The record gives the reactivity of an RNA of 177 nucleotides to 2A3. 2A3 adducts were read by reverse transcription with SuperScript II with manganese.
RNA sequence: GGGAACGACUCGAGUAGAGUCGAAAAACUGACGAAGACACCCAUUCCAGUGGACCACUGUGACCCAGGAGGCAUUCAGCCAUCAUGAUGUGGCCUUUACCUCCACUCCUGUCUUGUUCUACCCAGACGUCCGUCCUGAGUUCGCUCAGGACGGACGAAAAGAAACAACAACAACAAC
Reactivity to 2A3 in 0.01 (KOAc 150mM, MgCl2 10mM, bicine 150mM(pH8.5), 24C), signal-to-noise 1, nucleotides 027 to 126: a010c070u120g000a080c130g080a090a010g120a060c070a020c060c000c000a000u040u000c000c000a000g000u000g020g070a030c020c000a000c060u050g040u110g060a090c050c010c000a060g000g000a000g000g000c010a030u020u010c000a000g020c000c000a060u170c120a170u300g070a220u130g000u000g030g000c000c000u020u000u060a010c090c060u000c000c030a100c000u040c050c070u010g020u040c000u060u070g040u000u000c000u030a010c020c000c000a000g000a060